Structure probing data (2A3 and DMS) for a 177-nucleotide construct.
For 2A3 the reverse transcriptase was SuperScript II with manganese.
For DMS, 1,824 sequencing reads were counted.
Values are in units of 0.01, from 0 to 300, in steps of 10.
The 2A3 profile rests on 2,310 reads.
[RMDB]
RNA sequence: GGGAACGACUCGAGUAGAGUCGAAAAAAAACGAGCGUAAUCGCGUCUUGACUAGACUGUUAGUGACGUGAGUAGGGAUCUAUCCCAGUGUGCAUAGCGCACUAUACGCUGAUUAACAGUCACGGAAACUUUAGCGUGAGUUCGCUCACGCUAAAGUAAAAGAAACAACAACAACAAC
Reactivity to 2A3 in 0.01 (KOAc 150mM, MgCl2 10mM, bicine 150mM(pH8.5), 24C), signal-to-noise 2, nucleotides 027 to 126: a000a000a050a050c100g040a010g020c000g020u050a050a060u020c000g000c010g020u000c030u050u170g030a040c030u020a090g010a020c010u000g000u050u020a030g040u020g030a020c000g000u030g000a020g020u060a060g050g010g020a010u050c060u210a140u060c050c000c000a010g060u020g000u020g010c070a170u110a230g020c010g010c030a000c000u010a020u000a040c040g000c010u000g020a020u040u000a000a010c020a010g030u000c020a010c070g090g090a080a180
Reactivity to DMS in 0.01 (KOAc 150mM, MgCl2 10mM, bicine 150mM(pH8.5), 24C), signal-to-noise 2, nucleotides 027 to 126: a040a010a090a020c120g000a050g000c010g030u020a110a060u000c030g000c010g010u010c010u000u000g000a100c040u000a090g000a060c060u020g000u000u000a020g040u000g000a050c020g010u000g000a090g040u020a100g000g010g000a040u000c200u000a110u000c010c000c000a100g000u000g010u000g000c010a170u000a180g010c080g020c010a000c010u000a070u000a130c000g000c060u010g000a040u000u010a010a020c040a010g000u000c000a150c290g000g000a100a040